This 177-nucleotide RNA was probed chemically with 2A3 and DMS.
The RNA was probed in 150 mM KOAc, 10 mM MgCl2 and 150 mM bicine (pH 8.5) at 24 C.
For 2A3, 3,834 sequencing reads were counted.
Values cover nucleotides 27 to 126.
For DMS, 3,492 sequencing reads were counted.
[RMDB]
RNA sequence: GGGAACGACUCGAGUAGAGUCGAAAAACGGGCUGCCACUGCCCGCGGGCGCGGUCGGGGAGAUCUGGCUGCGGGGGACCACCGUGGUACGCGGGUAUCUGGGUGACCCGACGAUAACCGCCGCGAAACUUGUAUUCGAUUUCGAUCGAAUACAAGUAAAAGAAACAACAACAACAAC
Reactivity to 2A3 in 0.01 (KOAc 150mM, MgCl2 10mM, bicine 150mM(pH8.5), 24C), signal-to-noise 3, nucleotides 027 to 126: a010c020g010g010g000c020u090g050c030c000a060c050u020g000c000c000c020g000c020g000g020g050c030g000c010g020g040u090c110g040g010g030g050a170g000a100u040c060u100g160g000c080u120g010c080g020g000g010g050g000a020c000c020a010c030c020g000u030g040g080u120a070c020g010c000g030g000g020u020a040u030c040u130g110g000g020u020g030a080c000c010c020g000a010c020g000a000u040a050a060c020c010g010c070c030g060c050g020a160a100
Reactivity to DMS in 0.01 (KOAc 150mM, MgCl2 10mM, bicine 150mM(pH8.5), 24C), signal-to-noise 3, nucleotides 027 to 126: a070c040g020g000g020c010u000g000c000c020a060c060u010g010c020c010c000g020c020g010g000g020c040g010c000g000g020u000c120g030g000g020g010a220g000a080u010c050u000g010g000c060u000g010c050g020g010g000g000g000a190c040c010a060c040c030g040u000g020g030u000a070c030g000c060g020g000g000u000a000u010c050u020g030g000g020u000g000a070c010c000c010g020a060c090g000a100u010a060a160c030c030g010c070c080g020c110g020a090a090